[RMDB]
RNA sequence: GGGAACGACUCGAGUAGAGUCGAAAAGAUAUGGACGUGGGAGAGCGAUAAGCGUCCGGUCGGAAACGACCGACGCUUUUGACGCUUUAACACGUCCUAAGUCAAAACGCACUGUUCGCAGUGCGAACUCUGUUUAAACGUUCGCGUUUAAACAGAGAAAAGAAACAACAACAACAAC
Reactivity to 2A3 in 0.01 (KOAc 150mM, MgCl2 10mM, bicine 150mM(pH8.5), 24C), signal-to-noise 3, nucleotides 027 to 126: g000a010u050a050u130g000g010a000c000g010u010g000g030g020a070g020a000g030c070g050a080u030a180a000g010c010g020u030c200c120g070g000u000c010g020g030a110a080a060c030g000a000c010c000g000a000c000g020c050u030u020u000u020g050a030c060g000c010u000u040u010a020a000c010a000c010g000u000c000c000u000a010a000g010u000c000a040a020a040a030c000g010c000a010c010u020g090u130u110c300g060c170a010g000u000g000c000g010a020a010
Reactivity to DMS in 0.01 (KOAc 150mM, MgCl2 10mM, bicine 150mM(pH8.5), 24C), signal-to-noise 4, nucleotides 027 to 126: g010a060u000a300u010g000g000a010c000g020u000g000g000g020a100g000a020g020c000g050a180u010a010a000g000c010g030u010c120c130g050g010u000c000g010g010a110a100a200c020g020a010c010c000g000a020c010g010c000u000u000u000u010g030a170c050g000c000u000u000u000a090a070c000a010c010g000u000c010c000u000a010a060g000u000c050a130a070a090a180c010g000c000a010c000u000g010u010u010c260g020c000a000g010u010g010c000g010a050a110
Structure probing data (2A3 and DMS) for a 177-nucleotide construct. For 2A3, 10,254 sequencing reads were counted. The reactions ran in a buffer of 150 mM KOAc, 10 mM MgCl2 and 150 mM bicine (pH 8.5), at 24 C.